[RMDB]
Chemical mapping of a 177-nucleotide RNA with 2A3 and DMS. For 2A3 the reverse transcriptase was SuperScript II with manganese. It was measured as part of the RMDB library OK2TST. Reactivities are given for positions 27 through 126. For 2A3, 1,540 sequencing reads were counted.
RNA sequence: GGGAACGACUCGAGUAGAGUCGAAAAUAUAUUUUGAACUGCAAUAUCAUAGAUACCUUGUUUACCAAGUGCUGACAUUGCAAUUGAUGACGCUAAAGCAUUUAAUGCUUGGUUAGAACAAAUAUUAAGUUAUGGAUACGUUCGCGUAUCCAUAACUAAAAGAAACAACAACAACAAC
Reactivity to 2A3 in 0.01 (KOAc 150mM, MgCl2 10mM, bicine 150mM(pH8.5), 24C), signal-to-noise 2, nucleotides 027 to 126: u090a000u010a040u000u080u060u090g060a060a050c020u000g000c020a000a030u000a000u050c010a000u070a150g080a120u110a110c010c000u010u020g040u040u180u100a130c180c020a020a010g000u020g040c010u020g010a000c000a070u030u000g020c000a020a050u110u080g090a100u130g030a060c040g000c060u140a260a040a040g000c000a010u130u130u200a170a040u060g000c000u000u000g000g000u080u000a060g030a080a010c030a030a050a020u210a060u140u120a060
Reactivity to DMS in 0.01 (KOAc 150mM, MgCl2 10mM, bicine 150mM(pH8.5), 24C), signal-to-noise 3, nucleotides 027 to 126: u010a080u000a030u000u000u000u000g010a100a120c110u000g010c010a000a010u000a040u000c000a070u010a110g010a180u000a060c120c010u000u010g010u000u010u000a090c240c000a010a010g020u000g010c090u000g000a020c050a010u000u000g000c000a020a050u000u010g020a130u000g010a080c190g000c030u000a020a030a020g030c000a020u010u020u000a090a070u000g010c010u000u000g000g010u000u000a100g010a050a110c120a020a020a030u000a010u000u010a060